This 177-nucleotide RNA was probed chemically with 2A3 and DMS. The RNA was probed in 150 mM KOAc, 10 mM MgCl2 and 150 mM bicine (pH 8.5) at 24 C. It was measured as part of the RMDB library OK2TST.
RNA sequence: GGGAACGACUCGAGUAGAGUCGAAAAGCACCUGAGAGACCUGCCCGAUGAGAAAAUUAUUAUCGCUUCCGGGAGCGAGAUUCUGGAACUGGUGGUAAAUGCUAUAAUGGGCGACGACCAUCCGGAACUGUCUAUCCAAUUUCGAUUGGAUAGACAGAAAAGAAACAACAACAACAAC
Reactivity to 2A3 in 0.01 (KOAc 150mM, MgCl2 10mM, bicine 150mM(pH8.5), 24C), signal-to-noise 2, nucleotides 027 to 126: g030c010a040c090c030u050g030a050g000a010g030a130c000c000u060g030c070c000c000g050a100u160g040a020g070a040a140a090a020u200u200a150u120u110a110u060c010g000c010u080u000c030c030g070g010g020a000g000c020g010a000g030a040u030u060c010u030g010g010a130a150c060u010g000g000u070g000g000u050a140a190a050u160g000c000u030a010u020a200a220u210g030g000g030c020g000a000c010g020a010c010c000a000u020c000c010g000g050a070a060
Reactivity to DMS in 0.01 (KOAc 150mM, MgCl2 10mM, bicine 150mM(pH8.5), 24C), signal-to-noise 2, nucleotides 027 to 126: g000c090a080c010c020u020g010a150g010a110g000a090c070c040u000g000c000c020c010g010a120u000g010a100g000a070a040a110a110u010u000a110u000u030a080u000c020g010c080u000u000c040c020g010g000g000a070g020c040g010a060g000a190u000u000c010u000g010g010a020a040c130u000g010g020u000g000g000u000a040a050a120u000g030c000u000a080u010a160a140u000g010g000g000c010g000a020c060g020a050c030c010a040u000c020c020g000g000a080a170